[RMDB]
RNA sequence: GGGAACGACUCGAGUAGAGUCGAAAAGAAAGAACGGGUUUACCCCCGAAUCGAGCCUUGUGGUCUGUCCAGGCAUCAUUUAUAUGAGCCGCUCGAAUAACACUAAACUAAAAUCCAGGGUAAACAACCUACGAUAUGUCUUCGGACAUAUCGUAGGAAAAGAAACAACAACAACAAC
Reactivity to 2A3 in 0.01 (KOAc 150mM, MgCl2 10mM, bicine 150mM(pH8.5), 24C), signal-to-noise 5, nucleotides 027 to 126: g090a010a130a010g070a100a020c070g030g050g010u000u010u040a020c000c000c020c000c010g000a000a060u030c010g000a000g010c010c050u180u300g020u040g000g040u070c210u220g120u060c030c000a000g010g000c010a080u030c000a000u030u240u280a240u100a050u110g020a010g000c010c010g000c020u000c020g010a030a060u100a100a010c060a010c080u150a060a170a010c020u100a120a050a020a040u040c050c050a010g010g010g010u040a040a040a020c000a020a050
Reactivity to DMS in 0.01 (KOAc 150mM, MgCl2 10mM, bicine 150mM(pH8.5), 24C), signal-to-noise 2, nucleotides 027 to 126: g010a090a070a060g050a130a070c140g000g000g000u010u000u000a050c020c010c020c100c160g030a080a130u020c040g000a010g000c000c010u000u010g010u010g000g000u070c220u000g000u050c010c020a080g010g000c020a070u000c020a030u000u050u070a140u080a050u000g030a060g010c000c030g000c000u000c010g000a030a050u000a110a140c200a080c120u020a080a100a080c160u020a090a030a080a080u010c000c070a070g000g000g000u000a000a080a010c040a170a190